[RMDB]
RNA sequence: GGGAACGACUCGAGUAGAGUCGAAAAAAGAUCUUCUCCUCGAGGGAUGAACAGUCCUGGUUCCGGGAGACUGAGAUCUAUAACACAGUGUUGCUCAGACACGACAACAUCCUAGGCAAGGGGAGAGGCCAGCUGUGCCAGGCCUGGGGCUUUGCCCAAUGAGUCUCUAAUUCGUUAGAGACUCAUUAAAAGAAACAACAACAACAAC
Reactivity to 2A3 in 0.01 (KOAc 150mM, MgCl2 10mM, bicine 150mM(pH8.5), 24C), signal-to-noise 4, nucleotides 027 to 156: a010a000g010a000u020c010u070u020c000u010c000c000u030c030g030a070g020g030g000a010u080g070a130a090c090a120g030u010c010c000u060g060g080u190u080c050c030g000g020g010a020g040a030c080u140g040a020g010a050u000c080u020a100u040a070a050c130a000c030a070g000u000g010u030u040g030c070u020c060a040g080a140c050a020c130g070a000c010a040a020c010a040u100c010c010u030a040g020g050c040a080a070g050g010g020g000a100g020a020g020g030c000c000a030g020c120u150g020u130g120c040c030a020g050g000c000c010u020g010g020g000g000c040u080u090u140g000c020c000c000
Reactivity to DMS in 0.01 (KOAc 150mM, MgCl2 10mM, bicine 150mM(pH8.5), 24C), signal-to-noise 3, nucleotides 027 to 156: a130a080g000a030u000c010u010u010c010u000c000c000u000c030g020a300g040g000g000a050u000g020a130a100c160a300g020u000c020c000u000g010g030u000u010c050c070g000g000g010a040g010a120c180u000g020a070g020a040u000c020u000a120u000a060a120c080a110c100a130g040u000g010u000u000g000c000u020c050a180g010a140c130a140c030g000a070c030a030a030c040a100u000c020c020u000a050g010g010c050a090a080g020g010g030g000a220g020a100g030g000c010c010a120g040c040u000g010u000g020c050c020a160g010g010c040c010u000g010g020g010g020c040u000u000u010g000c020c000c050
An RNA of 207 nucleotides, treated with 2A3 and DMS and read out base by base. It was measured as part of the RMDB library OK3TST. For 2A3, 2,589 sequencing reads were counted. For 2A3 the reverse transcriptase was SuperScript II with manganese. Values are in units of 0.01, from 0 to 300, in steps of 10.